[RMDB]
RNA sequence: GGGAACGACUCGAGUAGAGUCGAAAAGAUAUGGAUCCUACGGUAGACAUGUCCGAGUGUCGGAAACGACACGAGGACAACAGCUAUUAGGAUCCUAAGUCAAAAGUACGCGCUUCGGCGCGUACAAGAUUCUUUUCAGGUUCGCCUGAAAAGAAUCAAAAGAAACAACAACAACAAC
Reactivity to DMS in 0.01 (KOAc 150mM, MgCl2 10mM, bicine 150mM(pH8.5), 24C), signal-to-noise 3, nucleotides 027 to 126: g000a050u000a090u020g000g000a020u000c000c000u020a030c300g000g000u020a000g000a040c180a170u020g000u000c000c010g010a300g000u010g010u000c000g010g010a000a010a050c010g010a000c000a030c010g000a300g000g000a000c000a030a010c140a140g000c000u000a000u000u000a030g010g000a010u000c000c000u000a000a040g000u020c000a120a120a080a190g010u000a010c030g000c010g030c010u000u010c210g050g010c000g050c010g020u000a000c010a030a110
Reactivity to 2A3 in 0.01 (KOAc 150mM, MgCl2 10mM, bicine 150mM(pH8.5), 24C), signal-to-noise 2, nucleotides 027 to 126: g000a000u000a010u030g000g000a000u000c010c000u040a050c080g230g060u040a030g070a120c170a300u300g040u000c000c010g060a030g010u000g000u010c030g000g000a030a030a000c010g010a010c000a020c010g020a020g050g060a000c010a010a000c020a020g000c000u000a000u030u020a000g010g000a000u040c000c000u000a010a010g000u000c010a130a060a020a130g000u000a010c000g000c040g020c080u030u240c300g160g040c000g000c040g000u020a000c000a000a000